[RMDB]
RNA sequence: GGGAACGACUCGAGUAGAGUCGAAAACGAAAUCUUGUGCAGCGGCCGAGGCGUUUGUGCUGGACGUGGCCUGAAUAAGGCUGUAACCCAACGUUCCGCCUUUCGCCAGAAGAUGGAUGCUUUGCGCAGGUACCCAAUGAUUCGUCAUUGGGUACCUAAAAGAAACAACAACAACAAC
Reactivity to DMS in 0.01 (KOAc 150mM, MgCl2 10mM, bicine 150mM(pH8.5), 24C), signal-to-noise 3, nucleotides 027 to 126: c160g000a080a090a060u020c060u010u020g020u030g000c020a070g020c030g020g000c050c000g000a160g020g010c000g010u000u000u000g020u060g020c000u000g010g000a030c000g040u000g020g040c000c000u010g020a050a130u050a170a080g000g020c010u000g030u010a110a140c100c060c040a200a070c000g000u000u000c010c070g000c020c020u000u010u000c000g000c010c010a120g010a080a030g010a160u020g000g010a070u000g020c010u000u030u030g020c070g040c060
Reactivity to 2A3 in 0.01 (KOAc 150mM, MgCl2 10mM, bicine 150mM(pH8.5), 24C), signal-to-noise 3, nucleotides 027 to 126: c050g040a030a030a090u100c070u080u060g000u020g020c000a020g000c020g060g000c020c020g020a050g000g000c030g020u000u000u020g100u160g000c020u030g000g000a000c010g000u040g020g010c000c000u020g010a020a060u300a070a030g000g000c000u020g080u110a060a050c020c000c010a000a000c000g000u020u020c000c020g000c000c000u010u000u000c010g000c010c010a020g070a050a030g070a060u240g020g000a010u020g010c000u080u110u070g020c050g010c020